[RMDB]
RNA sequence: GGGAACGACUCGAGUAGAGUCGAAAAAUCGCAGACGCCACUGUUACAGAAGCAGAUUGCGCGUUCGGUUCUUUCGUUACCUUUACCGCAACUGGCACCGUAGCGAAGGGUGAUGCCGGGGUUAUCAAAACUGGCUACAAACACACUGGCGAAUACACGUAUCGAUGUUUUUCGAAACAUCGAUACGAAAAGAAACAACAACAACAAC
Reactivity to 2A3 in 0.01 (KOAc 150mM, MgCl2 10mM, bicine 150mM(pH8.5), 24C), signal-to-noise 3, nucleotides 027 to 156: a000u080c020g000c030a010g050a120c010g000c030c000a010c080u060g040u090u050a060c080a080g130a210a020g050c010a010g110a300u020u090g000c040g000c010g030u060u040c020g000g000u010u040c060u010u130u060c070g080u070u060a030c010c000u050u100u130a040c010c010g020c040a090a050c040u010g110g000c040a040c060c030g030u040a010g020c030g050a070a010g020g000g010u030g020a010u110g010c000c000g030g030g000g000u080u100a110u270c060a000a030a000a110c010u010g000g000c020u050a070c110a050a120a000c040a000c000a010c080u020g040g010c020g050a030a010u100a040c090a010
Reactivity to DMS in 0.01 (KOAc 150mM, MgCl2 10mM, bicine 150mM(pH8.5), 24C), signal-to-noise 1, nucleotides 027 to 156: a110u000c100g020c040a100g020a100c000g100c000c020a140c040u070g000u000u030a300c120a090g000a160a050g040c000a110g020a090u000u000g010c010g050c070g070u000u000c050g000g000u000u020c030u000u000u010c050g020u000u000a040c080c020u000u000u000a000c010c000g110c070a100a040c170u000g010g000c060a300c010c030g010u000a010g020c070g020a070a090g000g000g050u000g000a150u020g010c000c020g050g000g010g000u000u000a200u010c070a040a050a000a060c030u000g000g020c000u000a300c030a040a040a000c010a030c060a090c070u000g040g010c010g010a070a070u000a070c020a120
Annotation
Structure probing data (2A3 and DMS) for a 207-nucleotide construct. DMS (dimethyl sulfate) methylates the pairing face of unpaired adenines and cytosines. The data come from the RNA Mapping Database (RMDB), library OK3TST. The DMS profile rests on 1,418 reads.